Overview: The record gives the reactivity of an RNA of 207 nucleotides to 2A3. The data come from the RNA Mapping Database (RMDB), library OK3TST. The reactions ran in a buffer of 150 mM KOAc, 10 mM MgCl2 and 150 mM bicine (pH 8.5), at 24 C. For 2A3 the reverse transcriptase was SuperScript II with manganese. The 2A3 profile rests on 807 reads.
RNA sequence: GGGAACGACUCGAGUAGAGUCGAAAAGCAGUUUCACUCACGAUAGACUCUUGAGGAAGAGUGUCAGUAUUGCUUCCUCAAGCAAUACAUUACGGUAUGCGAAUACUGUAAUUGACAGCAGAUUCGCAUCUGCUCUAUCUCAUGAAACUGGUGAGUCCACCCUCCAUGGCUUCGGCCAUGGAGGGUGAAAAGAAACAACAACAACAAC
Reactivity to 2A3 in 0.01 (KOAc 150mM, MgCl2 10mM, bicine 150mM(pH8.5), 24C), signal-to-noise 1, nucleotides 027 to 156: g080c010a010g010u000u000u000c020a020c050u060c040a060c100g040a050u000a060g000a060c020u060c010u030u070g160a120g160g060a040a020g030a000g000u030g020u030c030a000g010u000a030u000u070g000c000u100u050c040c060u200c110a010a000g000c000a000a010u010a040c010a040u000u040a020c000g020g020u070a010u010g040c030g030a020a000u010a110c000u000g010u060a080a020u110u200g030a020c010a020g000c000a000g000a010u120u120c030g000c080a000u000c030u060g010c000u000c000u010a020u020c010u000c030a020u030g000a010a020a020c030u000g030g060u060g000a020g030u030c040